[RMDB]
RNA sequence: GGGAACGACUCGAGUAGAGUCGAAAAUAAUUUAGUGAAACAAUUUGUAACUAUUGAAAAUAGAAAGAAAUUGUUCCUUCGAUAGUUUAUUAAUAUUAGUGACAUUUGCAUGCUUCAAAGCCUGUCGGAAUGAAAUAGGUUUCGACCUAUUUCAUUCAAAAGAAACAACAACAACAAC
Reactivity to 2A3 in 0.01 (KOAc 150mM, MgCl2 10mM, bicine 150mM(pH8.5), 24C), signal-to-noise 4, nucleotides 027 to 126: u190a000a040u110u140u140a050g030u040g120a100a020a010c030a010a010u030u020u090g050u060a020a030c000u000a000u000u050g040a100a120a020a020u090a020g100a030a140a000g080a000a100a020u070u050g020u030u030c000c000u020u040c030g030a040u010a040g030u080u050u140a080u050u160a070a150u100a080u220u170a070g040u050g050a020c030a070u080u060u030g080c070a060u050g030c030u110u120c090a170a100a090g030c010c040u070g030u070c060g050
Reactivity to DMS in 0.01 (KOAc 150mM, MgCl2 10mM, bicine 150mM(pH8.5), 24C), signal-to-noise 2, nucleotides 027 to 126: u010a060a040u010u040u030a110g000u010g010a100a070a040c020a020a060u000u000u000g000u000a020a140c000u000a010u000u000g000a060a040a090a050u000a040g000a030a100a120g000a030a050a040u000u020g000u000u000c020c050u010u000c010g010a030u000a000g010u010u000u030a020u020u020a030a010u030a030u010u000a100g000u010g010a050c010a030u000u010u000g010c000a040u010g000c020u010u010c070a030a090a150g020c040c030u010g000u000c120g010